Structure probing data (2A3 and DMS) for a 177-nucleotide construct. Source: RMDB library M2PK90, as collected in RNAgym. The DMS profile rests on 5,779 reads. DMS adducts were read by reverse transcription with MarathonRT. The RNA was probed in 150 mM KOAc, 10 mM MgCl2 and 150 mM bicine (pH 8.5) at 24 C.
RNA sequence: GGGAACGACUCGAGUAGAGUCGAAAAGGGUUUGGAUUACUUCAAUAGUCACAUGAGCAGAAGUAAACAGAACAAGAAGUACUGCGGUUAUUCAAGUUCAAAGUUCACACUAUCGCAAUAAAUUGAACACAGUUAGAUAGUUCGCUAUCUAACUGUGAAAAGAAACAACAACAACAAC
Reactivity to 2A3 in 0.01 (KOAc 150mM, MgCl2 10mM, bicine 150mM(pH8.5), 24C), signal-to-noise 5, nucleotides 027 to 126: g050g000g000u050u050u050g030g020a080u040u040a010c020u020u020c020a050a140u110a140g090u090c020a070c050a240u200g060a020g030c060a020g020a080a010g040u040a020a030a040c050a040g030a020a010c020a070a020g070a030a010g020u040a020c020u030g040c080g130g010u000u030a030u040u070c010a050a000g010u000u030c010a110a040a010g020u060u050c020a040c000a010c060u060a070u180c050g000c120a020a040u150a110a080a060u210u160g010a060a010
Reactivity to DMS in 0.01 (KOAc 150mM, MgCl2 10mM, bicine 150mM(pH8.5), 24C), signal-to-noise 6, nucleotides 027 to 126: g010g000g010u000u000u000g000g000a160u000u010a040c020u000u000c020a070a090u010a110g000u000c050a110c160a110u010g010a110g010c050a120g010a050a050g010u000a020a030a070c080a120g000a040a040c030a060a260g000a050a060g000u000a050c050u000g020c080g040g010u010u010a120u000u000c040a010a300g010u010u000c030a040a110a110g010u000u000c050a060c080a060c090u000a050u000c050g010c090a030a060u010a040a040a130u000u010g000a080a150